[RMDB]
An RNA of 177 nucleotides, treated with DMS and 2A3 and read out base by base. It was measured as part of the RMDB library TTRDEL. The reactions ran in a buffer of 150 mM KOAc, 10 mM MgCl2 and 150 mM bicine (pH 8.5), at 24 C.

RNA sequence: GGGAACGACUCGAGUAGAGUCGAAAAGAUAUGGACGUGCCAACUAUCAAAUGCUCGGAAACGAGGCAUUGACCACGGUUGCACGUCCUAAGUCAAAGCCAGCCAUAGCUUCGGCUAUGGCUGGCAACAGAAGUUAAAUGUUCGCAUUUAACUUCUGAAAAGAAACAACAACAACAAC
Reactivity to DMS in 0.01 (KOAc 150mM, MgCl2 10mM, bicine 150mM(pH8.5), 24C), signal-to-noise 7, nucleotides 027 to 126: g010a030u000a100u010g000g000a020c010g010u000g000c300c170a010a020c010u000a130u010c110a070a020a020u000g000c000u000c000g020g000a020a020a060c000g000a020g020g010c010a010u000u000g010a100c300c230a090c200g010g010u000u000g000c000a000c000g000u000c000c000u000a000a050g000u000c010a100a100a120g000c000c000a000g010c000c000a010u000a010g010c000u000u010c180g020g000c000u000a000u000g000g000c000u000g000g000c000a010a030
Reactivity to 2A3 in 0.01 (KOAc 150mM, MgCl2 10mM, bicine 150mM(pH8.5), 24C), signal-to-noise 7, nucleotides 027 to 126: g000a000u020a010u040g000g010a000c000g000u000g110c170c100a020a010c030u150a140u300c070a020a030a030u010g000c000u010c000g020g000a000a010a010c010g010a020g260g070c010a000u010u010g070a060c130c100a300c300g000g000u010u000g000c000a000c000g000u000c000c000u000a000a000g000u010c010a070a070a020g000c010c010a000g000c000c000a000u000a000g000c000u090u070c300g120g000c010u010a000u010g010g000c000u000g000g000c000a000a000